[RMDB]
RNA sequence: GGGAACGACUCGAGUAGAGUCGAAAAUUAACAUGUAACAAGCUAAUGUCAGAUGCAAAAAAUCAUUGUGAUGAUAAAAUUAAGUUUAAUGAGAUUCUAGCUUUAACAGAUCGCAGUUAUGAAUAUGCAUCGCUAUUGUUUUCGAACAAUAGCGAUGAAAAGAAACAACAACAACAAC
Reactivity to 2A3 in 0.01 (KOAc 150mM, MgCl2 10mM, bicine 150mM(pH8.5), 24C), signal-to-noise 3, nucleotides 027 to 126: u090u060a060a040c050a050u060g010u060a030a000c030a050a000g000c020u040a040a000u050g070u100c020a010g040a100u090g030c060a000a080a010a030a000a010u070c050a040u090u100g120u090g130a050u000g010a010u040a080a210a040a020u080u090a090a010g030u040u070u120a080a070u070g020a030g000a060u010u100c060u090a030g000c000u030u040u020a110a010c030a030g030a080u080c090g010c060a020g020u060u030a100u070g050a070a060u110a050u200g000
Reactivity to DMS in 0.01 (KOAc 150mM, MgCl2 10mM, bicine 150mM(pH8.5), 24C), signal-to-noise 4, nucleotides 027 to 126: u000u010a080a050c080a120u000g010u000a050a100c170a060a100g010c020u000a050a080u000g000u000c030a030g000a130u000g020c030a000a040a110a120a070a050u000c030a020u000u000g010u000g020a100u000g000a070u000a030a060a060a130u000u010a080a120g000u000u000u010a070a120u000g000a070g000a080u000u000c110u020a080g010c020u000u000u000a090a060c090a020g000a100u000c160g010c090a040g020u010u000a030u000g010a080a060u020a080u000g010